The record gives the reactivity of an RNA of 177 nucleotides to 2A3 and DMS.
The 2A3 profile rests on 22,559 reads.
The RNA was probed in 150 mM KOAc, 10 mM MgCl2 and 150 mM bicine (pH 8.5) at 24 C.
2A3 adducts were read by reverse transcription with SuperScript II with manganese.
Reactivities are rounded to 0.1 and cut off at 0 and 3.

[RMDB]
RNA sequence: GGGAACGACUCGAGUAGAGUCGAAAAGAUAUGGAUGUGAACUACCUGAAUCGCGAAGAACGAGCUCGGAAACGAGCUCGGGAGCGGCGGCACAUCCUAAGUCAAAACUACCCGUUCGCGGGUAGAACACAUAAUAACUCUUCGGAGUUAUUAUGUGAAAAGAAACAACAACAACAAC
Reactivity to 2A3 in 0.01 (KOAc 150mM, MgCl2 10mM, bicine 150mM(pH8.5), 24C), signal-to-noise 8, nucleotides 027 to 126: g000a000u010a010u030g000g000a010u010g020u020g050a230a290c100u130a150c200c060u150g160a240a260u300c040g000c000g180a300a020g000a000a000c010g000a000g000c000u000c000g000g000a010a010a000c010g020a070g020c010u010c000g010g000g000a010g000c020g160g010c070g010g000c000a000c000a010u010c000c000u000a010a000g010u010c010a010a010a100a210c010u010a010c000c010c000g020u040u070c300g000c030g050g000g000u020a010g000a040a010
Reactivity to DMS in 0.01 (KOAc 150mM, MgCl2 10mM, bicine 150mM(pH8.5), 24C), signal-to-noise 7, nucleotides 027 to 126: g010a010u000a040u010g000g000a010u000g020u000g010a110a120c150u010a210c050c050u020g020a120a080u010c020g020c010g000a100a120g000a160a190c020g000a010g010c000u000c000g010g000a010a010a020c000g010a010g010c000u000c000g000g000g000a010g020c010g040g030c240g000g010c010a010c000a000u000c000c000u010a010a070g000u000c010a070a080a110a200c010u000a000c000c000c000g010u000u010c210g020c000g000g000g010u000a000g010a110a190